RNA sequence: GGGAACGACUCGAGUAGAGUCGAAAAGAAGCGGCGAAAAAUGCGUGUAAAUAAAAGGUCAAUAUGACCUGACUGUGAUACCAAAUUAAAUGGGUCGAAGUCUCGCCAAAAUACGCAACAAAUAGAAAGAAUUGCAUCAAUUCGUUGAUGCAAUUCUAAAAGAAACAACAACAACAAC
Reactivity to DMS in 0.01 (KOAc 150mM, MgCl2 10mM, bicine 150mM(pH8.5), 24C), signal-to-noise 2, nucleotides 027 to 126: g010a110a150g050c230g000g000c010g000a010a050a050a070a050u010g010c040g040u000g010u000a040a100a070u010a040a050a050a000g010g000u000c010a090a160u000a170u010g010a010c000c000u000g010a010c010u010g020u010g000a010u000a100c010c000a030a100a130u010u010a030a090a100u000g000g000g010u000c030g000a060a010g000u000c000u010c030g000c030c040a070a060a070a050u000a010c000g000c020a080a080c180a030a080a070u020a100g010a060a120
Reactivity to 2A3 in 0.01 (KOAc 150mM, MgCl2 10mM, bicine 150mM(pH8.5), 24C), signal-to-noise 2, nucleotides 027 to 126: g100a040a020g110c080g020g020c030g080a090a040a000a000a030u100g010c030g020u050g000u030a080a070a070u090a050a100a050a000g000g010u000c020a020a180u240a180u300g000a000c030c000u000g000a000c000u000g010u030g140a000u190a300c010c020a090a070a010u280u120a080a120a060u060g000g000g000u000c000g010a000a000g020u010c010u000c020g000c000c030a200a000a000a000u090a000c010g010c010a000a050c010a060a130a020u170a050g130a010a190
Record summary: This 177-nucleotide RNA was probed chemically with DMS and 2A3. DMS adducts were read by reverse transcription with MarathonRT. The DMS profile rests on 1,870 reads. Values cover nucleotides 27 to 126.